[RMDB]
RNA sequence: GGGAACGACUCGAGUAGAGUCGAAAAAGCUAGUUGGGUCUGUAGACACCGCACCUGGCUUGCCCGUUCCAAGUCGAGAGUGGGUUCAUGUUUCCUGAGCGAAGGCUCGGGUGAUGUGAGCUUUAGAAUCGGGGGGCAAUGCGUUAGGCUGGUUUCACCGUUCUUUAAACUUCGGUUUAAAGAACGGAAAAGAAACAACAACAACAAC
Reactivity to 2A3 in 0.01 (KOAc 150mM, MgCl2 10mM, bicine 150mM(pH8.5), 24C), signal-to-noise 2, nucleotides 027 to 156: a010g050c030u030a000g000u050u110g030g000g020u010c070u120g220u140a090g040a090c130a080c080c020g050c010a020c010c030u010g050g010c000u000u010g030c000c020c000g030u080u050c040c010a170a070g100u160c030g060a020g010a000g110u080g010g010g000u000u010c010a020u020g010u000u020u000c000c000u000g000a000g010c020g150a230a090g230g000c000u000c000g000g000g000u010g000a010u010g000u000g000a010g000c000u030u080u070a040g030a030a060u080c030g000g010g000g020g000g000c000a010a150u220g000c020g040u050u040a020g010g060c120u080g040g000u000u030u030c020a020